This 207-nucleotide RNA was probed chemically with 2A3 and DMS.
It was measured as part of the RMDB library OK3TST.
For 2A3 the reverse transcriptase was SuperScript II with manganese.
RNA sequence: GGGAACGACUCGAGUAGAGUCGAAAAAGGUCAGGAGAUUGAGACCAGCCUGGUCAACGUGGUGAAACCUCGUCUAUACUAAAAAUACAAAAAUUAGCUGGGCGUGGUUAAUCCCAGCUACUCAGGAGGCUGAGGCAGGAGAAUCACUUGAACCUGGACCUACUUACAUGUUCGCAUGUAAGUAGGUAAAAGAAACAACAACAACAAC
Reactivity to 2A3 in 0.01 (KOAc 150mM, MgCl2 10mM, bicine 150mM(pH8.5), 24C), signal-to-noise 3, nucleotides 027 to 156: a010g000g000u030c030a010g020g050a090g050a090u070u150g050a120g030a070c010c000a000g050c000c000u000g020g000u060c040a060a040c140g030u050g010g010u040g030a090a070a050c000c000u000c010g010u000c000u050a120u060a150c050u120a050a050a050a050a040u200a060c060a070a130a080a050a150u090u030a020g020c050u030g000g000g000c000g030u020g000g060u100u090a020a010u060c000c000c000a020g000c020u050a060c030u060c040a090g030g030a020g070g050c070u140g060a020g030g000c030a010g000g040a050g040a030a020u010c000a010c000u020u060g000a050a010c000c020u010g010g020
Reactivity to DMS in 0.01 (KOAc 150mM, MgCl2 10mM, bicine 150mM(pH8.5), 24C), signal-to-noise 1, nucleotides 027 to 156: a000g000g020u000c010a040g000g000a190g030a170u000u000g030a050g010a110c030c030a070g040c010c020u010g000g000u000c030a090a030c020g020u000g000g010u000g030a140a090a160c010c000u000c060g000u010c030u000a100u000a130c020u010a010a030a080a090a090u000a300c060a080a080a070a010a220u010u000a010g010c030u000g000g010g000c050g050u000g010g010u000u010a030a060u010c000c000c000a040g020c020u010a020c120u000c060a070g060g010a150g010g010c000u010g000a000g010g010c100a050g000g010a200g000a140a060u000c010a020c050u000u010g020a060a040c030c010u010g020g010

Annotation
For DMS the reverse transcriptase was MarathonRT. For 2A3, 1,553 sequencing reads were counted.